Source: RMDB library OK2TRN, as collected in RNAgym. This 177-nucleotide RNA was probed chemically with DMS and 2A3. High DMS reactivity at an A or C suggests that its Watson-Crick edge is free. The reactions ran in a buffer of 150 mM KOAc, 10 mM MgCl2 and 150 mM bicine (pH 8.5), at 24 C.

[RMDB]
RNA sequence: GGGAACGACUCGAGUAGAGUCGAAAAGAAAAAGUUUCACUGCAUCAAUUCUAACUUUGUCAUUGAUUCGUGCUGGACUAAAGUUUGUGAUUAACUUUUUUGACUCAAGUAGGAUGGCCUGUUAAAAGGACGAACACUAAUUCGUUAGUGUUCGUCCAAAAGAAACAACAACAACAAC
Reactivity to DMS in 0.01 (KOAc 150mM, MgCl2 10mM, bicine 150mM(pH8.5), 24C), signal-to-noise 2, nucleotides 027 to 126: g000a020a040a020a110a090g000u000u010u000c020a090c090u020g000c150a070u010c100a080a110u000u010c130u000a090a050c110u000u000u020g000u010c040a110u050u010g030a080u010u010c110g030u000g000c080u000g000g000a070c070u010a030a040a040g010u010u000u000g000u000g010a060u010u010a030a030c010u000u000u000u000u000u000g000a080c030u000c050a010a070g020u010a050g000g000a090u000g000g000c040c050u010g000u010u000a080a080a060a080
Reactivity to 2A3 in 0.01 (KOAc 150mM, MgCl2 10mM, bicine 150mM(pH8.5), 24C), signal-to-noise 1, nucleotides 027 to 126: g050a000a050a010a020a000g000u060u000u000c020a020c030u030g080c020a060u000c020a030a120u220u000c010u050a030a030c030u060u010u100g010u020c020a100u040u200g080a060u170u000c050g080u210g110c080u070g000g050a020c060u180a100a040a000g050u050u090u120g020u060g050a030u120u050a020a020c030u040u020u020u030u000u050g060a030c000u010c010a030a110g020u030a010g090g080a020u020g100g060c000c020u080g080u100u110a080a110a010a000